[RMDB]
This 177-nucleotide RNA was probed chemically with DMS and 2A3. The reactions ran in a buffer of 150 mM KOAc, 10 mM MgCl2 and 150 mM bicine (pH 8.5), at 24 C. 2A3 adducts were read by reverse transcription with SuperScript II with manganese. For 2A3, 2,656 sequencing reads were counted. For DMS the reverse transcriptase was MarathonRT.
RNA sequence: GGGAACGACUCGAGUAGAGUCGAAAAGAUAUGGACCGAUAGAGAGCAACAGCACAUAUCGGAAACGAUAUGUGACAUGCUCCUAUACGGUCCUAAGUCAAAACUUCGUCACUUCGGUGACGAAGAAGACGUAUCAGUGCUUCGGCACUGAUACGUCAAAAGAAACAACAACAACAAC
Reactivity to DMS in 0.01 (KOAc 150mM, MgCl2 10mM, bicine 150mM(pH8.5), 24C), signal-to-noise 1, nucleotides 027 to 126: g020a020u000a300u000g000g020a020c020c000g000a060u000a010g020a210g000a000g010c000a000a070c290a080g010c020a000c000a000u030a000u020c000g000g000a040a070a170c010g000a030u010a000u000g010u000g060a030c040a170u000g000c000u020c000c000u000a000u000a180c010g120g000u000c000c000u020a010a100g000u020c050a080a120a200a140c040u000u000c000g000u000c010a000c000u050u020c140g050g020u000g030a000c020g010a000a000g000a060a080
Reactivity to 2A3 in 0.01 (KOAc 150mM, MgCl2 10mM, bicine 150mM(pH8.5), 24C), signal-to-noise 1, nucleotides 027 to 126: g060a000u040a070u200g000g000a000c000c030g000a000u010a010g300a020g000a010g170c040a050a090c120a270g110c000a010c000a000u010a010u000c040g010g000a070a020a030c020g020a000u030a000u000g010u000g050a020c000a010u090g000c000u000c010c000u000a000u030a080c000g000g000u030c000c000u000a020a000g000u010c020a020a030a060a090c020u000u000c000g020u000c000a010c030u030u130c300g200g010u000g000a040c040g000a020a000g000a010a010